[RMDB]
RNA sequence: GGGAACGACUCGAGUAGAGUCGAAAACCAAGCAUGGGAUUUAGACUCUUAAACCACUGUGGUAUUUCCGCUGAUGUACCAUUAAGCUUAAAUGCCACACUCAUAUCACUUGAAAGUGUGCAUACCGAAAUGAAACCUGGUUCGCCAGGUUUCAUUUAAAAGAAACAACAACAACAAC
Reactivity to DMS in 0.01 (KOAc 150mM, MgCl2 10mM, bicine 150mM(pH8.5), 24C), signal-to-noise 3, nucleotides 027 to 126: c010c000a130a120g050c120a100u010g010g010g000a140u000u000u000a060g000a080c150u000c090u010u010a040a050a110c070c050a060c130u000g010u000g020g010u000a000u000u000u000c070c190g010c050u010g000a110u010g000u010a100c150c020a010u010u010a100a110g020c010u000u000a020a020a020u000g000c040c000a010c030a030c120u000c050a040u000a090u010c120a070c190u010u000g000a070a130a090g010u010g020u010g000c050a040u000a140c080c080g000
Reactivity to 2A3 in 0.01 (KOAc 150mM, MgCl2 10mM, bicine 150mM(pH8.5), 24C), signal-to-noise 2, nucleotides 027 to 126: c000c000a000a030g080c070a140u160g060g000g090a040u040u100u120a020g030a130c030u050c020u100u090a090a080a010c060c000a060c070u030g010u010g050g000u020a010u030u000u000c070c030g000c030u050g030a040u060g050u100a100c000c040a050u060u030a080a010g000c030u040u080a020a010a030u040g010c030c000a010c000a000c000u010c020a100u130a050u140c050a050c090u030u080g100a110a070a070g090u040g030u050g000c010a050u060a130c010c060g080